[RMDB]
This 177-nucleotide RNA was probed chemically with DMS and 2A3. Source: RMDB library RFMREP, as collected in RNAgym. For 2A3 the reverse transcriptase was SuperScript II with manganese. For 2A3, 2,509 sequencing reads were counted. Values cover nucleotides 27 to 126.
RNA sequence: GGGAACGACUCGAGUAGAGUCGAAAAGCUAGACGCCUCGGCUGGUUCGCGACGCAGACCCCCGGCCGUGGAUGCUCGCUCGGGCUCGGGAUCCGCCCAGGUAGCGGCCGGACCCUGGUCCCGCGCCGCUAUUUUGAAGCUUCGGCUUCAAAAUAGCAAAAGAAACAACAACAACAAC
Reactivity to DMS in 0.01 (KOAc 150mM, MgCl2 10mM, bicine 150mM(pH8.5), 24C), signal-to-noise 2, nucleotides 027 to 126: g000c020u010a130g010a130c130g000c010c020u010c050g020g000c010u000g000g020u000u010c040g030c030g010a100c150g030c090a160g010a110c070c060c120c020c000g000g000c010c010g000u000g010g010a080u010g020c070u000c070g020c010u000c010g000g000g020c020u000c040g000g000g000a050u000c020c010g000c080c000c020a190g000g020u010a100g020c080g010g020c120c040g000g000a030c010c000c020u000g000g000u000c000c000c010g010c100g010c050c200
Reactivity to 2A3 in 0.01 (KOAc 150mM, MgCl2 10mM, bicine 150mM(pH8.5), 24C), signal-to-noise 2, nucleotides 027 to 126: g000c010u050a040g020a200c060g050c010c010u010c020g020g010c010u010g080g000u110u140c050g040c060g160a130c160g000c140a080g040a190c020c010c000c000c040g020g000c020c010g000u020g030g020a070u090g010c000u030c040g000c010u020c010g020g000g000c010u020c020g000g030g010a060u010c020c000g000c000c000c010a060g190g120u110a040g040c100g090g010c130c060g010g000a010c030c010c000u010g060g000u050c000c010c010g020c030g030c010c030